[RMDB]
Structure probing data (2A3) for a 207-nucleotide construct. Source: RMDB library OK3TST, as collected in RNAgym.
RNA sequence: GGGAACGACUCGAGUAGAGUCGAAAAAAAGCUUCUACUGAAGUAUUAUACUUGGGAUAUAGAAAAAAGGGAGAGGUUUGGGAGCCUUUUUUUGAUACUACUCCCGCGACCGUUUACUACCUUAAGGGGAAGCUAAUUCACGCUUCUUACGAAAGGGCUAAUGACAGAUUUUCGAAUCUGUCAUUAGAAAAGAAACAACAACAACAAC
Reactivity to 2A3 in 0.01 (KOAc 150mM, MgCl2 10mM, bicine 150mM(pH8.5), 24C), signal-to-noise 2, nucleotides 027 to 156: a000a000a000g020c010u010u000c020u070a260c080u070g050a060a020g070u000a070u300u070a130u080a050c070u070u060g050g040g020a030u140a070u100a200g150a130a150a030a110a030a050g020g080g050a040g020a070g030g070u220u300u300g090g010g000a030g030c000c040u080u140u040u020u000u000u080g050a040u060a120c000u020a020c000u050c040c020c010g000c050g050a050c000c000g050u070u030u060a070c020u050a050c000c000u000u050a000a050g000g000g020g000a000a000g000c000u030a040a150u210u130c040a000c080g000c000u010u000c000u000u110a150c000g010a150a000a000g010g010g000
For 2A3, 529 sequencing reads were counted.